[RMDB]
RNA sequence: GGGAACGACUCGAGUAGAGUCGAAAAUUUGAAAAUGACUGCUAUUUCCUCACAUGUGCCAGCUCUUUCAAAGCCAUUAUUGCCUGUUGAGUAAUACACAUGUAGCCACUUUUUUCUUUGAUCCAACAGGCAAUAAUGGGUGCUCAAGCUACAUUCAAGUACGCUCAGUAUUCGUACUGAGCGUACUAAAAGAAACAACAACAACAAC
Reactivity to 2A3 in 0.01 (KOAc 150mM, MgCl2 10mM, bicine 150mM(pH8.5), 24C), signal-to-noise 2, nucleotides 027 to 156: u000u020u090g020a010a010a050a040u210g030a050c000u020g020c020u120a100u070u070u070c010c020u120c010a080c020a090u120g000u000g030c030c000a010g000c030u030c030u050u060u120c120a080a110a070g060c020c020a000u000u000a000u000u000g000c000c010u000g040u000u000g040a100g130u050a150a050u160a080c070a000c020a140u160g020u030a020g030c030c020a070c040u040u060u040u070u120u060c100u100u220u240g030a050u030c010c010a000a000c000a010g000g000c010a000a000u000a000a000u000g000g010g000u060g000c000u000c030a110a060g030c050u060a010c090a170u230u250c040a020
Reactivity to DMS in 0.01 (KOAc 150mM, MgCl2 10mM, bicine 150mM(pH8.5), 24C), signal-to-noise 1, nucleotides 027 to 156: u010u020u000g010a060a020a180a130u020g030a100c020u000g080c080u000a070u000u000u000c030c010u000c040a100c090a110u000g030u000g030c060c100a180g000c010u000c000u020u010u010c060a120a070a200g020c010c020a040u000u000a040u010u000g010c000c010u000g020u010u030g000a070g030u000a040a170u000a030c060a070c120a090u020g080u010a070g030c030c070a040c110u000u000u000u000u000u000c100u040u010u000g000a070u000c060c010a010a050c020a020g050g000c030a000a020u000a020a020u000g010g000g020u010g030c020u000c090a050a140g000c000u010a050c030a110u000u000c040a170
Chemical mapping of a 207-nucleotide RNA with 2A3 and DMS. Reactivities are rounded to 0.1 and cut off at 0 and 3. DMS (dimethyl sulfate) methylates the pairing face of unpaired adenines and cytosines. Source: RMDB library OK3TST, as collected in RNAgym. DMS adducts were read by reverse transcription with MarathonRT.